Structure probing data (2A3) for a 177-nucleotide construct. It was measured as part of the RMDB library RFM100.
RNA sequence: GGGAACGACUCGAGUAGAGUCGAAAAGGGCUUAGGCAUCUUUCAGCCCUUGCUUCGGGUUUUCGUCCUUAUUGGCCUCCCUCAUUGGGCCUCAGAAGCUUCACAGAACAUUGACUUGAUUUGUGACUCCGACGAGUAGGUUCGCCUACUCGUCGGAAAAAGAAACAACAACAACAAC
Reactivity to 2A3 in 0.01 (KOAc 150mM, MgCl2 10mM, bicine 150mM(pH8.5), 24C), signal-to-noise 1, nucleotides 027 to 126: g070g000g000c060u090u070a030g130g000c050a050u070c040u120u200u110c090a000g000c000c000c000u000u050g000c000u090u080c020g000g020g000u020u000u050u290c080g000u080c000c000u010u070a050u090u030g060g000c000c000u100c000c080c000u000c030a020u000u300g030g010g000c000c000u000c000a050g000a030a000g000c000u010u010c040a040c010a010g000a070a000c000a000u010u010g020a130c230u000u110g040a050u060u030u050g050u000g060a010c000